Annotation
This 177-nucleotide RNA was probed chemically with DMS and 2A3. For DMS, 7,127 sequencing reads were counted. Reactivities are given for positions 27 through 126.

RNA sequence: GGGAACGACUCGAGUAGAGUCGAAAAGAUAUGGAUUUCGCUGCGAAGAACGGACCUCCCCACCUCGGAAACGAGAGGGUCCGGGAGCAGACGAAAUCCUAAGUCAAAACCACGGUUCGCCGUGGAACUCUACUUUAUACUUCGGUAUAAAGUAGAGAAAAGAAACAACAACAACAAC
Reactivity to DMS in 0.01 (KOAc 150mM, MgCl2 10mM, bicine 150mM(pH8.5), 24C), signal-to-noise 4, nucleotides 027 to 126: g000a010u000a040u010g000g000a000u000u000u000c010g000c000u000g000c000g010a070a170g000a120a230c030g010g000a030c000c000u000c040c010c030c050a230c240c020u000c010g000g000a010a010a030c010g000a010g010a230g010g010g000u000c000c000g000g000g000a030g010c000a010g010a130c000g000a000a000a000u000c000c000u000a000a080g000u000c010a100a080a130a160c000c000a000c000g010g010u000u020c190g030c000c000g010u000g000g000a030a070
Reactivity to 2A3 in 0.01 (KOAc 150mM, MgCl2 10mM, bicine 150mM(pH8.5), 24C), signal-to-noise 5, nucleotides 027 to 126: g010a010u040a000u070g000g000a000u010u000u010c020g000c000u000g020c010g300a300a010g000a030a020c000g000g000a000c020c000u060c060c030c020c060a300c120c000u010c010g020g000a010a010a000c020g000a000g020a030g050g000g000u000c000c000g000g010g000a000g000c010a020g140a240c000g000a000a000a000u000c000c000u010a010a010g010u000c020a020a030a120a200c010c000a000c010g000g040u090u080c300g020c100c000g000u000g000g000a010a010